An RNA of 207 nucleotides, treated with 2A3 and read out base by base.
The reactions ran in a buffer of 150 mM KOAc, 10 mM MgCl2 and 150 mM bicine (pH 8.5), at 24 C.
It was measured as part of the RMDB library M2RFPK.
Reactivities are rounded to 0.1 and cut off at 0 and 3.

RNA sequence: GGGAACGACUCGAGUAGAGUCGAAAAGUUAGGUGAGGCUCCUAUGCAAACACAGGCCACUGCCCAAAAAUGUCCAAAGACGCCAAUGGGUAGAACAUGGAUUGUCGGAUUAAGGCUUUCCAUAAUGAAAACAAAGUAUGCUUCGGCAUACUUUGAAGACUAUCGAGGAGUUCGCUCCUCGAUAGUCAAAAGAAACAACAACAACAAC
Reactivity to 2A3 in 0.01 (KOAc 150mM, MgCl2 10mM, bicine 150mM(pH8.5), 24C), signal-to-noise 1, nucleotides 027 to 156: g040u050u020a020g030g020u030g040a060g040g030c030u060c060c030u100a060u200g080c080a020a070a020c040a000c050a080g090g000c020c020a010c000u010g000c000c000c000a020a020a000a000a000u040g020u000c010c030a120a140a100g010a010c010g000c010c020a020a020u020g000g000g040u050a030g010a060a010c000a030u010g000g000a000u010u010g000u020c000g110g020a150u110u250a180a050g020g000c010u000u000u000c000c000a030u080a090a080u160g120a030a080a000a000c000a000a000a010g010u000a000u000g000c000u030u070c140g110g000c010a000u010a010c000u010u000u000g000a010a020